Source information
Chemical mapping of a 170-nucleotide RNA with DMS and 2A3. Values cover nucleotides 27 to 129. The RNA was probed in 150 mM KOAc, 10 mM MgCl2 and 150 mM bicine (pH 8.5) at 24 C.
RNA sequence: GGGAACGACUCGAGUAGAGUCGAAAAGCACGAGUCCUCUUCCUAGGUCCGGAGUCGAUCUCCAUCUGAUCCGUCCGGGCCCUCUUCGUCGGGGGAGCUCCCUCCCCGUCCUUCCCUUUUCUUAUUAUCCGGCUAACGUUCGCGUUAGCCAAAAGAAACAACAACAACAAC
Reactivity to DMS in 0.01 (KOAc 150mM, MgCl2 10mM, bicine 150mM(pH8.5), 24C), signal-to-noise 3, nucleotides 027 to 129: g020c040a120c060g030a060g030u050c040c000u000c050u090u000c000c050u020a050g070g050u040c040c040g020g060a000g030u070c130g050a030u000c000u020c170c220a240u030c150u050g040a040u010c020c110g050u040c020c040g000g010g040c040c030c100u030c030u060u010c060g080u050c060g000g000g000g000g000a070g050c170u000c020c000c010u000c020c000c000c000g020u040c020c060u020u010c030c020c010u040u020u010u010c000u010u070a120u040u030a110u110c150c110
Reactivity to 2A3 in 0.01 (KOAc 150mM, MgCl2 10mM, bicine 150mM(pH8.5), 24C), signal-to-noise 4, nucleotides 027 to 129: g090c050a010c070g000a000g020u000c010c000u010c000u020u010c000c010u000a030g000g000u000c000c000g030g000a040g060u240c030g050a020u000c030u030c110c020a190u050c120u140g000a000u020c020c050g070u030c000c000g050g010g000c010c000c000u070c020u100u130c040g100u000c020g010g000g000g010g030a020g020c010u040c030c000c000u000c010c000c000c020g030u010c000c000u010u020c000c000c000u010u040u040u010c010u020u100a150u040u000a090u110c060c070